[RMDB]
RNA sequence: GGGAACGACUCGAGUAGAGUCGAAAACUGCAGCGGUCUGUUCGGUGAAGUCCGAAUGGAAACCUGGGUAUCGAUAGUGGGGUCGAUAACCAGGGUGAUAUCAAGAGCAUCCGCGAGCUCUUCCAGCCUAGCAGUAUAGGUUCGCCUAUACUGCUAGAAAAGAAACAACAACAACAAC
Reactivity to DMS in 0.01 (KOAc 150mM, MgCl2 10mM, bicine 150mM(pH8.5), 24C), signal-to-noise 5, nucleotides 027 to 126: c050u000g010c160a100g010c010g000g010u000c010u000g010u000u000c010g000g010u000g000a170a130g010u000c000c000g010a020a010u000g000g000a020a100a110c000c000u000g010g000g000u000a010u000c010g000a020u000a100g020u000g020g000g000g010u000c000g000a010u000a000a030c000c000a010g000g000g000u010g010a100u000a090u000c130a040a030g000a030g010c030a050u000c020c010g010c020g000a110g000c000u000c010u000u010c120c090a130g010c240
Reactivity to 2A3 in 0.01 (KOAc 150mM, MgCl2 10mM, bicine 150mM(pH8.5), 24C), signal-to-noise 6, nucleotides 027 to 126: c050u110g020c070a050g020c010g010g030u000c010u010g010u020u000c010g000g050u080g180a180a040g200u010c000c000g010a010a010u010g000g010a030a060a060c010c000u000g020g000g000u010a000u010c010g010a010u020a070g130u110g040g020g020g000u000c000g000a000u010a010a020c000c000a010g020g020g010u040g030a090u110a050u190c120a080a010g000a010g020c010a020u040c010c000g000c010g010a010g000c010u030c000u070u030c030c030a050g030c020